[RMDB]
RNA sequence: GGGAACGACUCGAGUAGAGUCGAAAACCGACCGGAGUCAGAUGUCGUUUUGGUGUCUGAUUCGGUAAGGAACCGGGAGCACCAUCUGCGUAGGCUUGAGGUUUAAGACUUGCGUCGCCUACGGUCUCAUGUAUAAAACAUUCGUGUUUUAUACAUGAAAAGAAACAACAACAACAAC
Reactivity to DMS in 0.01 (KOAc 150mM, MgCl2 10mM, bicine 150mM(pH8.5), 24C), signal-to-noise 9, nucleotides 027 to 126: c010c010g000a030c010c010g010g010a030g010u010c000a010g010a010u000g010u000c010g020u010u020u030u030g010g010u000g000u000c000u000g000a050u000u000c000g000g000u010a050a120g000g010a130a080c060c030g010g000g010a090g010c060a080c060c060a090u010c070u010g020c020g010u000a020g010g010c010u000u020g010a080g010g000u000u010u030a110a120g010a060c040u010u010g010c120g010u000c160g000c000c010u000a020c020g000g010u010c080u000
Reactivity to 2A3 in 0.01 (KOAc 150mM, MgCl2 10mM, bicine 150mM(pH8.5), 24C), signal-to-noise 9, nucleotides 027 to 126: c000c000g010a010c000c000g070g040a030g190u030c000a000g010a030u030g030u050c060g080u080u090u300u300g030g000u010g010u000c000u000g000a030u010u000c000g000g000u030a050a050g080g010a030a020c030c020g030g020g020a030g030c030a030c050c000a060u070c050u150g040c020g020u020a010g020g010c010u050u130g040a040g050g030u050u060u160a110a040g070a050c020u040u110g070c080g080u050c030g010c000c000u020a030c010g020g030u020c010u000
An RNA of 177 nucleotides, treated with DMS and 2A3 and read out base by base. The reactions ran in a buffer of 150 mM KOAc, 10 mM MgCl2 and 150 mM bicine (pH 8.5), at 24 C. DMS adducts were read by reverse transcription with MarathonRT.